Annotation
Structure probing data (2A3) for a 207-nucleotide construct. Conditions: 150 mM KOAc, 10 mM MgCl2 and 150 mM bicine (pH 8.5), 24 C. It was measured as part of the RMDB library RFM130. 2A3 adducts were read by reverse transcription with SuperScript II with manganese. For 2A3, 1,083 sequencing reads were counted.
RNA sequence: GGGAACGACUCGAGUAGAGUCGAAAAGCAAAUAAAGAUUUGCUUCGCAGGAGAGAUAGCGCCAUCACCUCUUCUAAGAAGUUAACUAGUGGUGACGGUAUCUCUCCUACGUAGCAAUCCUUAUAUAUGCAAAACGAUUACCCUUCGGGGUAAUCGAGUCAAGUACACCCUUCGGGGUGUACUUGACAAAAGAAACAACAACAACAAC
Reactivity to 2A3 in 0.01 (KOAc 150mM, MgCl2 10mM, bicine 150mM(pH8.5), 24C), signal-to-noise 2, nucleotides 027 to 156: g000c000a010a030a070u040a030a020a010g020a020u100u070u130g010c030u020u020c000g000c000a000g020g000a000g000a000g000a000u000a020g150c000g030c000c010a000u020c010a000c000c020u010c040u060u050c040u120a110a120g020a020a010g090u190u200a110a070c120u060a060g000u010g010g000u000g000a000c000g040g070u000a000u000c000u000c000u000c000c010u000a000c000g000u000a000g000c010a000a010u010c000c000u030u010a010u010a010u000a010u040g010c000a000a000a000a230c010g010a000u000u000a000c020c000c000u000u070c180g030g010g000g010u010a000a000u000c020g000a000